Source information: This 177-nucleotide RNA was probed chemically with DMS and 2A3. It was measured as part of the RMDB library OK1LIB.

[RMDB]
RNA sequence: GGGAACGACUCGAGUAGAGUCGAAAAUUAAAAGGGUUAUUCCAUGAUGACAGUAAAGAAGAGGACGAGAGACUGGCGGCAUUCCUCAUGGACAGGCAUAUUAUAGUACCUAGGGCAGCUCAUGAAACAGACAUUCCAGGUUCGCCUGGAAUGUCUGAAAAGAAACAACAACAACAAC
Reactivity to DMS in 0.01 (KOAc 150mM, MgCl2 10mM, bicine 150mM(pH8.5), 24C), signal-to-noise 1, nucleotides 027 to 126: u000u060a030a110a130a040g010g000g000u020u010a030u040u010c050c040a070u020g000a080u010g010a050c070a000g000u020a070a130a100g000a050a080g020a130g000g000a040c050g000a140g000a090g000a050c000u000g000g000c030g060g010c050a080u000u000c010c000u000c030a060u000g000g010a120c070a000g030g000c020a010u040a060u000u020a070u000a060g000u000a040c010c000u000a020g000g050g000c040a020g020c080u000c020a090u000g000a230a060a150
Reactivity to 2A3 in 0.01 (KOAc 150mM, MgCl2 10mM, bicine 150mM(pH8.5), 24C), signal-to-noise 1, nucleotides 027 to 126: u240u230a000a140a000a000g000g000g020u070u130a010u000u090c000c000a000u180g000a000u040g060a030c010a090g150u170a070a010a000g040a030a030g050a060g000g030a000c000g000a000g000a000g010a190c000u010g060g060c090g000g000c000a000u030u010c000c000u020c000a000u040g000g070a040c010a010g000g130c000a000u030a030u300u000a030u060a060g160u200a090c000c030u140a090g000g000g000c000a000g030c000u000c140a120u110g020a030a030a020
2A3 adducts were read by reverse transcription with SuperScript II with manganese.
For 2A3, 677 sequencing reads were counted.